RNA sequence: GGGAACGACUCGAGUAGAGUCGAAAAUUCCAAAUAGCUGGAACUGUAGGCGUGCGCCACCAUGCCCCGCUAAUUUUUGUAUAUUUACUAGAGACAGGGUUUCACCAUGUUGGCCAGGAUGGUCUUGAUUUCUUGACUUCGUGAGCUACCAUCUACACGUCGUAGUAUACUUCGGUAUACUACGACGAAAAGAAACAACAACAACAAC
Reactivity to DMS in 0.01 (KOAc 150mM, MgCl2 10mM, bicine 150mM(pH8.5), 24C), signal-to-noise 1, nucleotides 027 to 156: u000u000c020c000a000a110a130u040a070g050c030u010g030g020a060a080c040u000g000u000a070g020g000c060g050u000g010c100g030c030c040a050c050c030a060u000g000c060c000c040c020g020c040u030a010a040u000u010u000u000u000g020u000a090u000a120u000u000u000a060c070u010a030g020a090g000a060c060a040g010g000g000u000u020u010c060a000c030c030a130u020g020u000u000g000g020c060c060a120g010g000a020u000g030g010u000c050u010u010g000a130u000u010u000c040u000u000g010a120c030u000u030c090g050u000g020a060g090c020u030a030c030c040a070u000c020u000a090c080a150
Reactivity to 2A3 in 0.01 (KOAc 150mM, MgCl2 10mM, bicine 150mM(pH8.5), 24C), signal-to-noise 2, nucleotides 027 to 156: u020u000c000c000a030a010a110u160a020g030c080u070g060g050a060a120c040u050g080u180a040g000g010c040g060u060g020c100g040c000c030a010c000c020a030u030g010c020c010c000c000g010c020u010a030a110u030u090u050u070u060g110u010a080u010a040u080u180u070a090c060u030a020g010a010g000a050c030a040g030g000g020u020u090u090c010a020c020c010a040u100g020u050u020g030g000c010c010a010g020g020a050u040g000g030u000c020u020u110g060a150u080u070u020c050u090u050g050a100c010u030u030c080g080u000g040a040g000c030u020a040c010c010a040u040c020u050a040c090a000